[RMDB]
RNA sequence: GGGAACGACUCGAGUAGAGUCGAAAAGCCACAUAUCCCGUGACAUUGCGAAAGCAAGGCUGACGGUAGGUAGUCCUGGGCGGCGACAGCCUUGGACUGCGGCGUAAAGGUGUACCUGGGGCCGUUAUAACGCGGUAACAGUUCGCUGUUACCGCAAGCCUCUAUCUAUGUUCGCAUAGAUAGAGGCAAAAGAAACAACAACAACAAC
Reactivity to DMS in 0.01 (KOAc 150mM, MgCl2 10mM, bicine 150mM(pH8.5), 24C), signal-to-noise 2, nucleotides 027 to 156: g030c020c030a060c090a190u010a220u010c050c020c010g010u040g010a030c030a090u000u010g030c020g010a210a170a240g000c020a030a030g000g070c010u020g010a090c090g000g020u000a150g070g000u010a050g010u000c010c000u010g000g010g040c020g030g020c050g010a090c080a140g040c000c000u030u000g000g010a070c020u000g000c020g010g010c050g000u010a070a100a080g000g010u000g010u000a110c020c030u020g000g020g000g010c050c040g000u000u000a090u000a110a150c150g000c020g000g000u000a030a030c010a000g000u000u000c210g010c030u000g000u000u000a020c000c010g000c000a000a030
Reactivity to 2A3 in 0.01 (KOAc 150mM, MgCl2 10mM, bicine 150mM(pH8.5), 24C), signal-to-noise 3, nucleotides 027 to 156: g030c020c000a040c020a060u150a050u080c040c000c000g030u060g030a050c090a130u080u060g000c010g060a120a000a020g000c020a030a020g060g030c070u050g050a020c020g020g000u050a040g070g040u040a000g010u000c000c000u000g000g000g000c020g060g040c080g070a060c100a050g030c000c000u000u010g010g010a000c000u000g000c000g020g000c010g020u070a070a070a030g020g010u080g050u100a110c010c010u040g020g000g080g000c000c000g000u040u050a090u040a120a030c100g000c000g010g010u000a000a000c000a000g030u070u090c160g050c110u000g000u000u000a000c000c000g000c010a010a000
This 207-nucleotide RNA was probed chemically with DMS and 2A3. For 2A3, 2,947 sequencing reads were counted. Conditions: 150 mM KOAc, 10 mM MgCl2 and 150 mM bicine (pH 8.5), 24 C. For DMS the reverse transcriptase was MarathonRT.